[RMDB]
RNA sequence: GGGAACGACUCGAGUAGAGUCGAAAACGUCAUCUCGGCUAGUUCGCGUGACCGGGAGAUCCGAGCAGAGGCAUAGCGAACUGCGCACGGAGAAGCCUUGAGGGAAUGCCGUAGGACCCGGGUUCGACGGGUCCGUCUGCUUCGGCAGGCGGACCUGAAAAGAAACAACAACAACAAC
Reactivity to 2A3 in 0.01 (KOAc 150mM, MgCl2 10mM, bicine 150mM(pH8.5), 24C), signal-to-noise 7, nucleotides 027 to 126: c030g050u020c020a120u020c030u010c010g010g010c020u030a010g010u020u030c010g000c010g020u030g040a180c000c000g000g020g000a060g010a040u050c020c010g020a020g020c030a020g030a050g060g000c020a030u060a030g010c000g010a010a010c010u020g010c040g000c010a060c040g040g010a030g020a030a010g030c000c000u050u070g050a060g000g020g030a060a040u070g060c020c000g010u030a030g020g020a020c000c000c000g010g010g000u010u030c010g020a010
Reactivity to DMS in 0.01 (KOAc 150mM, MgCl2 10mM, bicine 150mM(pH8.5), 24C), signal-to-noise 9, nucleotides 027 to 126: c070g010u010c040a070u010c010u010c010g010g010c030u010a070g010u010u010c020g010c040g010u010g000a150c030c010g010g010g000a120g000a100u020c030c030g000a140g010c070a070g010a140g010g010c020a060u020a100g020c030g000a040a050c030u000g000c080g010c050a070c060g000g000a060g010a110a130g000c020c010u000u010g010a120g010g000g010a090a060u020g000c020c020g000u010a100g000g000a120c040c000c010g000g000g010u010u010c070g010a170
The record gives the reactivity of an RNA of 177 nucleotides to 2A3 and DMS. 2A3 adducts were read by reverse transcription with SuperScript II with manganese. The data come from the RNA Mapping Database (RMDB), library OK1LIB. The reactions ran in a buffer of 150 mM KOAc, 10 mM MgCl2 and 150 mM bicine (pH 8.5), at 24 C. For 2A3, 28,098 sequencing reads were counted. For DMS, 67,904 sequencing reads were counted.